Chemical mapping of a 177-nucleotide RNA with 2A3 and DMS. The reactions ran in a buffer of 150 mM KOAc, 10 mM MgCl2 and 150 mM bicine (pH 8.5), at 24 C. For 2A3, 1,368 sequencing reads were counted.
[RMDB]
RNA sequence: GGGAACGACUCGAGUAGAGUCGAAAACUAUUCUUAGGUCUUCCCUUGUUCCCUGGAAAUUCCGAAUAUAAUCAAUUAUGUCGGAUUGUUGACAUGCUUGGUAAUCCUCCCACUUGGAUGUUAGAAACGAUAUAGGGUGAUUCGUCACCCUAUAUCGAAAAGAAACAACAACAACAAC
Reactivity to 2A3 in 0.01 (KOAc 150mM, MgCl2 10mM, bicine 150mM(pH8.5), 24C), signal-to-noise 2, nucleotides 027 to 126: c010u010a070u160u020c030u100u180a060g030g000u000c000u000u000c010c000c000u000u040g020u000u000c010c010c000u010g070g070a070a140a160u090u000c020c010g020a070a010u100a010u010a110a100u100c050a040a130u090u010a010u050g100u030c030g000g060a040u000u100g080u010u060g000a010c000a010u030g030c020u030u050g050g050u100a150a230u120c000c020u000c000c000c000a000c000u010u040g080g020a010u040g030u000u060a050g060a070a070a020
Reactivity to DMS in 0.01 (KOAc 150mM, MgCl2 10mM, bicine 150mM(pH8.5), 24C), signal-to-noise 6, nucleotides 027 to 126: c030u010a040u010u000c030u010u000a130g000g000u010c020u000u000c010c000c010u010u000g000u000u000c010c000c010u010g010g010a080a110a150u000u000c010c010g020a070a060u000a060u000a070a100u010c150a110a090u010u000a040u010g010u000c010g010g000a100u010u010g010u000u000g010a060c040a030u000g000c040u000u000g010g000u000a090a130u000c060c040u000c010c000c030a090c150u000u000g000g010a060u000g020u010u000a090g010a130a090a150
DMS (dimethyl sulfate) methylates the pairing face of unpaired adenines and cytosines. For 2A3 the reverse transcriptase was SuperScript II with manganese.